[RMDB]
RNA sequence: GGGAACGACUCGAGUAGAGUCGAAAAUCCUAAGUCUGAGCCUUGCACCUUGGAUUUAACACGGUAGGCUCGGAAACGAGCCUAUAAUCGUGUUUGUCAGGUGCAAUGUUUGGAUAUGGAAAACGGUGAACAACAAGUUCGCUUGUUGUUCACCGAAGUAAGCUGGUGUGUUCGCACACCAGCUUACAAAAGAAACAACAACAACAAC
Reactivity to 2A3 in 0.01 (KOAc 150mM, MgCl2 10mM, bicine 150mM(pH8.5), 24C), signal-to-noise 1, nucleotides 027 to 156: u040c000c010u000a110a000g050u010c000u020g020a000g000c030c020u020u000g040c020a000c010c010u080u240g290g000a070u200u300u180a020a000c000a000c000g010g000u000a030g020g000c000u020c000g000g000a000a000a000c000g000a000g050c000c000u050a040u070a130a170u220c000g010u000g000u010u010u040g010u010c000a020g000g050u070g290c000a000a020u000g010u000u000u000g000g010a020u050a080u080g150g120a040a120a050a000c020g000g000u020g010a000a000c000a000a000c000a000a000g080u080u090c180g040c140u010u000g010u000u000g000u000u010c000a000c000c000g010a000a000

An RNA of 207 nucleotides, treated with 2A3 and read out base by base. 2A3 adducts were read by reverse transcription with SuperScript II with manganese. Source: RMDB library RNAMAK, as collected in RNAgym.